[RMDB]
RNA sequence: GGGAACGACUCGAGUAGAGUCGAAAACGAAUAGAAUUCGUUCUAUUCGAAUGACUGCUAAAAGCAGAGUUGACUGCGCCGAGCAGAAACGGCAAAGGAAUAAGUAGCCCAGAUUCGUCUGGGCUAACCUAGUCCUCUGUUUCGACAGAGGACUAGGAAAAGAAACAACAACAACAAC
Reactivity to DMS in 0.01 (KOAc 150mM, MgCl2 10mM, bicine 150mM(pH8.5), 24C), signal-to-noise 3, nucleotides 027 to 126: c010g000a000a010u000a010g020a000a070u010u010c170g010u000u000c000u010a020u000u000c000g010a110a170u000g000a150c000u000g010c010u000a110a060a060a180g010c000a010g000a160g010u000u010g000a170c000u000g000c300g000c030c030g050a070g000c080a050g010a030a070a100c020g000g000c040a110a150a050g000g010a100a070u010a060a110g000u010a010g000c000c000c000a000g010a040u000u000c190g000u000c000u000g010g000g000c000u000a000a010
Reactivity to 2A3 in 0.01 (KOAc 150mM, MgCl2 10mM, bicine 150mM(pH8.5), 24C), signal-to-noise 1, nucleotides 027 to 126: c000g000a000a000u000a010g020a000a020u100u070c260g020u090u000c000u020a030u040u000c000g000a020a040u170g070a020c010u000g010c040u120a110a150a090a000g000c000a000g070a030g100u050u090g090a170c000u000g000c000g000c020c020g000a020g040c020a010g120a060a090a010c000g020g000c030a040a090a080g090g070a100a080u150a170a030g110u030a010g000c020c000c000a000g000a010u020u060c100g050u000c080u000g000g000g000c000u000a000a000
An RNA of 177 nucleotides, treated with DMS and 2A3 and read out base by base. Reactivities are given for positions 27 through 126. For DMS the reverse transcriptase was MarathonRT. High 2A3 reactivity points to a flexible backbone, as in loops and unpaired stretches. For 2A3 the reverse transcriptase was SuperScript II with manganese.